This 177-nucleotide RNA was probed chemically with 2A3 and DMS.
For DMS, 4,153 sequencing reads were counted.
The 2A3 profile rests on 2,073 reads.
For DMS the reverse transcriptase was MarathonRT.
Conditions: 150 mM KOAc, 10 mM MgCl2 and 150 mM bicine (pH 8.5), 24 C.
RNA sequence: GGGAACGACUCGAGUAGAGUCGAAAAGGGACAUGAAGCCCAUCACUGUGGGGGGCAAGAUCGUGGGGUCCCUGUGUGCCAUUGCAGGUGUGUUAACCAUUGCUUUGCCAGUGCCAGUGAUUGUCUCCUAGUGAGCUUAGUUCGCUAAGCUCACUAGAAAAGAAACAACAACAACAAC
Reactivity to 2A3 in 0.01 (KOAc 150mM, MgCl2 10mM, bicine 150mM(pH8.5), 24C), signal-to-noise 2, nucleotides 027 to 126: g020g020g010a020c020a040u120g090a100a010g010c000c010c000a000u010c010a000c020u030g040u220g070g190g020g050g000g000c000a010a020g010a040u080c050g000u040g000g040g000g000u000c030c000c010u000g000u000g000u010g040c040c060a070u070u130g030c000a000g020g050u080g020u040g030u190u100a030a010c000c000a020u020u070g000c010u070u070u000g000c020c020a060g060u080g290c010c000a000g000u020g030a040u020u050g030u020c020u010c020
Reactivity to DMS in 0.01 (KOAc 150mM, MgCl2 10mM, bicine 150mM(pH8.5), 24C), signal-to-noise 3, nucleotides 027 to 126: g010g000g000a010c020a040u000g010a140a160g020c010c010c010a240u010c020a030c010u000g020u000g020g020g010g000g010g020c020a020a010g010a060u010c110g020u000g000g000g000g000u010c060c000c010u000g000u000g020u000g020c150c180a090u010u000g010c010a030g000g010u000g020u000g010u000u010a140a140c020c010a040u000u000g010c050u000u000u000g010c020c020a050g030u010g010c140c020a020g000u000g000a050u000u000g000u000c010u000c020